[RMDB]
RNA sequence: GGGAACGACUCGAGUAGAGUCGAAAAGGGUCAUCUCACCGAUACCACCGGCACCACCAUUCUUGACGACAGGAUUGCUUGGACCAGGGCGACCAUCCAGAGUCGUAAGGCGCUCCUCGUUGAUGUUAUUGGGAAGAGCACGGAAGAACUGCUGGAAGCGAUAAUUUAGAUUCGUCUAAAUUAUCGCAAAAGAAACAACAACAACAAC
Reactivity to DMS in 0.01 (KOAc 150mM, MgCl2 10mM, bicine 150mM(pH8.5), 24C), signal-to-noise 2, nucleotides 027 to 156: g030g020g020u000c020a140u000c010u000c050a230c020c020g030a110u000a110c050c030a110c060c030g000g010c040a070c010c010a100c060c020a110u000u000c040u010u000g030a060c040g020a080c060a130g020g020a090u000u000g030c060u000u010g000g030a090c070c040a160g000g000g020c050g010a110c020c000a090u000c080c050a160g010a150g030u010c000g030u000a090a100g010g020c000g000c020u010c020c020u000c050g010u010u010g010a150u000g010u010u000a090u000u010g000g000g000a050a110g010a100g020c010a090c080g010g000a090a100g010a080a110c090u010g000c000u010g020g010a140a250
Reactivity to 2A3 in 0.01 (KOAc 150mM, MgCl2 10mM, bicine 150mM(pH8.5), 24C), signal-to-noise 4, nucleotides 027 to 156: g040g000g020u050c040a080u040c080u030c040a060c030c040g020a040u060a110c010c030a030c030c010g000g010c020a020c050c000a020c000c010a040u060u030c020u050u090g040a050c030g030a020c040a080g000g030a080u040u070g030c050u050u080g040g040a060c010c050a060g030g040g030c020g040a070c030c010a020u080c020c020a050g020a020g070u040c010g010u030a020a090g040g000c020g010c040u050c010c000u040c040g040u030u050g030a060u060g030u120u060a100u070u080g000g000g000a050a050g020a020g000c040a030c100g030g000a030a010g030a080a030c030u070g020c010u080g020g060a090a020
Notes
Structure probing data (DMS and 2A3) for a 207-nucleotide construct. The reactions ran in a buffer of 150 mM KOAc, 10 mM MgCl2 and 150 mM bicine (pH 8.5), at 24 C. For 2A3, 3,762 sequencing reads were counted.